[RMDB]
RNA sequence: GGGAACGACUCGAGUAGAGUCGAAAAGAUAUGGAAUCCGGGUGCGAUGGCGACGAAGUCGGAAACGACAGAGCCAUCGACCCACCGACCGGAUUCCUAAGUCAAAACCCGAACUUCGGUUCGGGAACCAUCUCUUAUUGUUCGCAAUAAGAGAUGGAAAAGAAACAACAACAACAAC
Reactivity to 2A3 in 0.01 (KOAc 150mM, MgCl2 10mM, bicine 150mM(pH8.5), 24C), signal-to-noise 5, nucleotides 027 to 126: g000a020u080a040u160g000g000a000a010u000c000c020g040g010g040u110g040c010g000a010u000g000g020c030g040a300c060g050a240a020g020u000c000g010g020a080a060a040c010g000a000c010a010g050a000g030c010c000a000u000c000g000a000c000c010c000a010c010c010g090a090c030c070g000g000a000u000u000c000c000u020a160a010g050u030c030a010a030a100a250c000c000c000g000a000a000c000u060u090c300g110g000u020u000c000g010g010g000a000a010
Reactivity to DMS in 0.01 (KOAc 150mM, MgCl2 10mM, bicine 150mM(pH8.5), 24C), signal-to-noise 5, nucleotides 027 to 126: g010a030u000a300u010g000g010a010a000u000c000c000g030g010g010u000g020c020g010a020u000g000g010c000g010a160c260g000a070a100g000u000c010g000g000a070a070a140c000g010a000c000a030g000a250g010c000c000a010u000c000g000a040c060c120c050a000c200c060g000a110c080c010g010g000a010u010u000c000c000u000a020a080g010u000c030a090a060a080a170c010c000c000g000a010a000c010u000u020c210g040g000u000u000c000g010g000g010a030a030
An RNA of 177 nucleotides, treated with 2A3 and DMS and read out base by base. The RNA was probed in 150 mM KOAc, 10 mM MgCl2 and 150 mM bicine (pH 8.5) at 24 C. The data come from the RNA Mapping Database (RMDB), library TTRDEL. The 2A3 profile rests on 15,496 reads. As a SHAPE reagent, 2A3 marks flexible, mostly unpaired nucleotides at the ribose 2'-OH.